[RMDB]
RNA sequence: GGGAACGACUCGAGUAGAGUCGAAAAAUCACCGGUGGGGAACCCCAUACGGCAACGGCGUACAAGUAAAUGCUAACCAAUCCGUGGUAUCUACGCGACGGAGCAUCCACGGAUAACUCUAACAAGGCUAAGCGUCUCGGUUUCGACCGAGACGCAACCUACACCUCUGAUUCGUCAGAGGUGUAGGAAAAGAAACAACAACAACAAC
Reactivity to 2A3 in 0.01 (KOAc 150mM, MgCl2 10mM, bicine 150mM(pH8.5), 24C), signal-to-noise 2, nucleotides 027 to 156: a000u030c030a020c010c000g010g010u050g000g000g020g120a140a140c050c000c000c020a020u150a180c010g000g020c040a140a050c070g030g000c040g030u080a000c050a180a030g040u150a100a090a030u140g000c030u040a030a170c020c010a020a010u050c000c000g020u010g000g020u040a080u010c030u100a080c050g070c040g170a110c190g060g050a020g040c040a020u000c000c000a000c000g000g010a000u020a050a050c050u060c040u070a050a090c060a080a010g080g020c050u080a180a000g020c000g000u000c000u000c000g000g000u040u080u070c160g090a040c070c000g000a000g010a000c000g000c000a000a000